Background
Chemical mapping of a 207-nucleotide RNA with DMS. Source: RMDB library OK3TST, as collected in RNAgym. DMS adducts were read by reverse transcription with MarathonRT.

[RMDB]
RNA sequence: GGGAACGACUCGAGUAGAGUCGAAAAAUAGUGCUAGUGAUACCGGUACCGAAACCUAUGCAGGUACGGGAGGUAUGGUUCCAUACCAAUAGAACAAAAGCAAGUAUAGGCCAUAUACAGCAAUGGCCAUCAUAGCAUUCUAGGGUAUACGAUAACAUGUGGUUGUGGUGUUCGCGCCGCGGCCACAAAAAGAAACAACAACAACAAC
Reactivity to DMS in 0.01 (KOAc 150mM, MgCl2 10mM, bicine 150mM(pH8.5), 24C), signal-to-noise 3, nucleotides 027 to 156: a160u010a060g010u000g000c000u000a010g030u010g030a090u000a080c030c020g010g030u000a040c020c010g000a190a090a130c030c020u000a050u000g010c090a220g000g020u010a020c020g010g010g010a090g010g040u000a040u000g000g010u010u010c070c000a080u000a040c050c030a080a100u000a060g020a090a160c090a050a110a080a180g020c030a030a100g000u000a100u000a080g030g010c000c010a010u000a010u010a100c070a120g010c060a090a040u000g020g000c000c010a030u000c060a090u000a090g000c020a120u000u010c110u000a030g000g000g000u000a060u010a060c050g010a080u000a040a040c040a120